[RMDB]
RNA sequence: GGGAACGACUCGAGUAGAGUCGAAAAUUGGAUUAGCGGUGUUUUCGCCUGAUUAAAACGAUGCGCUCAGCAGGUCGCUGCGAUGCCUUCGAGCUGGUGCUGCCGCCGGUGCUGAUGAUGAUGAUGAUCUCGCCCUUAGUUUCGACUAAGGGCGAGAAAAAGAAACAACAACAACAAC
Reactivity to DMS in 0.01 (KOAc 150mM, MgCl2 10mM, bicine 150mM(pH8.5), 24C), signal-to-noise 1, nucleotides 027 to 126: u000u020g020g010a100u000u000a090g010c030g000g000u000g010u000u000u000u020c020g000c000c010u020g000a190u000u010a030a040a050a120c050g000a030u000g000c120g030c010u000c240a210g020c030a060g020g010u010c260g010c040u000g000c000g020a110u010g000c080c000u000u020c050g000a070g010c000u020g000g000u010g000c140u010g000c010c000g020c020c010g010g000u000g000c030u010g010a110u010g010a060u000g000a110u000g020a140u000g000a120